[RMDB]
RNA sequence: GGGAACGACUCGAGUAGAGUCGAAAAGAUAUGGACGUUAAACCUACCCAGGCGAAGAACUCGGAAACGAGGGAGCCUGUGAGUAGGCGAAUAACGUCCUAAGUCAAAACAGGACUUCGGUCCUGAACAAUAUGACGGUCUUCGGACCGUCAUAUUGAAAAGAAACAACAACAACAAC
Reactivity to 2A3 in 0.01 (KOAc 150mM, MgCl2 10mM, bicine 150mM(pH8.5), 24C), signal-to-noise 2, nucleotides 027 to 126: g060a040u110a050u110g040g000a000c010g000u000u000a070a290a070c010c000u010a000c000c000c000a000g010g010c020g140a300a030g020a070a040c010u060c010g000g030a100a060a060c010g000a000g020g000g000a010g020c000c000u000g020u030g070a170g000u010a000g000g000c000g030a070a080u030a020a010c000g000u020c010c000u010a000a000g000u000c040a000a020a120a120c010a000g000g000a000c000u060u240c300g170g000u000c000c000u000g010a030a030
Reactivity to DMS in 0.01 (KOAc 150mM, MgCl2 10mM, bicine 150mM(pH8.5), 24C), signal-to-noise 2, nucleotides 027 to 126: g020a050u020a300u010g000g020a020c020g010u020u000a020a200a110c000c000u000a000c000c000c000a010g000g010c000g030a090a140g030a120a160c000u000c020g000g000a100a130a180c000g000a020g020g010g000a040g050c010c000u000g010u010g000a080g030u000a000g010g020c040g000a080a120u000a010a020c000g010u000c000c000u000a010a110g000u010c030a100a050a110a200c040a000g000g000a020c000u000u020c150g020g000u010c000c010u000g020a090a140
The record gives the reactivity of an RNA of 177 nucleotides to 2A3 and DMS. The reactions ran in a buffer of 150 mM KOAc, 10 mM MgCl2 and 150 mM bicine (pH 8.5), at 24 C. The data come from the RNA Mapping Database (RMDB), library TTRDEL. For DMS the reverse transcriptase was MarathonRT.